[RMDB]
RNA sequence: GGGAACGACUCGAGUAGAGUCGAAAAUCCUUUCUCGAUAGAGAUUGGAGUCAUACAACCCCAGAAACCAUUCCUUAUACCUUGAGUAUUGCUGAAUUCAGUUUAGCGUGCAUGCUCUUGGCUAUUCAUACCAAGGACAACUUCGGUUGUCCUUGAACCAUUACUCAAAGUUCGCUUUGAGUAAUGGAAAAGAAACAACAACAACAAC
Reactivity to 2A3 in 0.01 (KOAc 150mM, MgCl2 10mM, bicine 150mM(pH8.5), 24C), signal-to-noise 9, nucleotides 027 to 156: u000c010c000u000u000u000c060u020c020g190a290u180a280g000a000g000a010u010u010g000g010a010g050u060c030a030u090a210c080a060a150c040c010c010c020a050g140a060a100a040c090c030a110u140u180c040c010u120u130a060u050a150c000c000u000u010g000a000g000u020a060u160u100g020c000u030g040a130a130u180u170c060a140g150u060u100u130a070g030c060g040u070g040c030a010u010g000c000u010c000u010u010g010g000c000u060a030u080u130c050a050u080a240c080c000a000a000g000g000a000c000a000a000c000u070u090c180g090g000u000u000g000u000c000c000u000u000g000a000a000
Reactivity to DMS in 0.01 (KOAc 150mM, MgCl2 10mM, bicine 150mM(pH8.5), 24C), signal-to-noise 3, nucleotides 027 to 156: u000c000c000u000u000u000c000u000c010g020a300u000a140g010a020g010a030u000u000g000g000a050g000u000c110a100u010a100c070a090a130c040c000c000c030a130g000a160a110a090c080c050a250u000u010c030c000u010u010a170u000a040c010c010u010u000g000a050g030u000a030u000u000g000c010u000g000a060a080u000u000c130a220g010u000u000u000a040g020c080g020u000g030c090a220u000g020c000u000c010u030u000g020g020c040u010a110u000u010c060a150u010a130c140c010a000a010g020g020a030c010a010a020c010u000u010c300g030g000u000u000g020u000c000c010u010u000g000a040a140

Structure probing data (2A3 and DMS) for a 207-nucleotide construct. The reactions ran in a buffer of 150 mM KOAc, 10 mM MgCl2 and 150 mM bicine (pH 8.5), at 24 C. Values cover nucleotides 27 to 156. DMS adducts were read by reverse transcription with MarathonRT. For DMS, 6,161 sequencing reads were counted. High 2A3 reactivity points to a flexible backbone, as in loops and unpaired stretches.